[RMDB]
RNA sequence: GGGAACGACUCGAGUAGAGUCGAAAAGAUAUGGACCCAGGAGACAUGUCCCGUGGUCGGAAACGACCACGUGGACAACAGCUCCGGGUCCUAAGUCAAAACCUAUGCGUGUUCGCACGCAUAGGAAUCCUUUAUAAAGGUUCGCCUUUAUAAAGGAAAAAGAAACAACAACAACAAC
Reactivity to 2A3 in 0.01 (KOAc 150mM, MgCl2 10mM, bicine 150mM(pH8.5), 24C), signal-to-noise 3, nucleotides 027 to 126: g010a010u040a010u080g000g000a000c020c060c160a250g070g010a010g020a010c250a270u300g010u000c020c000c010g020u000g030g000u010c000g000g020a110a020a000c020g000a000c000c020a000c040g000u050g000g000a000c000a010a000c010a020g000c000u000c000c010g010g010g000u000c000c000u000a030a010g000u000c010a020a060a120a230c010c000u000a000u010g000c000g010u030g050u060u110c230g040c150a000c000g000c000a000u000a000g010g000a010a030
Reactivity to DMS in 0.01 (KOAc 150mM, MgCl2 10mM, bicine 150mM(pH8.5), 24C), signal-to-noise 4, nucleotides 027 to 126: g000a020u000a110u010g000g000a040c000c000c010a130g060g000a020g000a040c070a300u020g010u000c000c000c000g020u000g010g010u000c000g000g000a040a040a080c000g020a010c000c000a010c000g010u010g020g010a010c000a040a040c180a150g000c000u000c000c010g000g010g000u000c000c000u000a000a050g000u000c010a150a070a160a200c010c000u000a010u000g000c000g050u000g010u000u010c300g030c000a000c000g000c000a010u000a010g000g000a040a050
Conditions: 150 mM KOAc, 10 mM MgCl2 and 150 mM bicine (pH 8.5), 24 C. This 177-nucleotide RNA was probed chemically with 2A3 and DMS. For 2A3 the reverse transcriptase was SuperScript II with manganese.